[RMDB]
RNA sequence: GGGAACGACUCGAGUAGAGUCGAAAAAAGGUAUGAAUAUUGAAUUCAUUGGUCAUAGAACUAAGAGAUUCACAGCCCGAUAUGUGAGUAGGGGUCACUCAAUCAUUCCUAAGAUCACUUUGCCACACCGAUGGGAGUGGUUCGCCACUCCCAUCGGAAAAGAAACAACAACAACAAC
Reactivity to 2A3 in 0.01 (KOAc 150mM, MgCl2 10mM, bicine 150mM(pH8.5), 24C), signal-to-noise 1, nucleotides 027 to 126: a000a000g000g000u060a000u000g050a140a080u080a060u120u110g010a010a010u050u000c000a040u170u000g030g040u040c000a080u130a300g000a300a000c000u000a000a000g010a000g000a120u000u000c110a020c020a190g200c000c000c000g120a130u100a040u090g140u000g080a080g040u000a130g050g010g030g000u030c040a000c010u000c080a000a180u060c000a080u030u080c010c000u130a000a090g000a030u020c000a040c120u120u070u000g020c060c000a000c010a000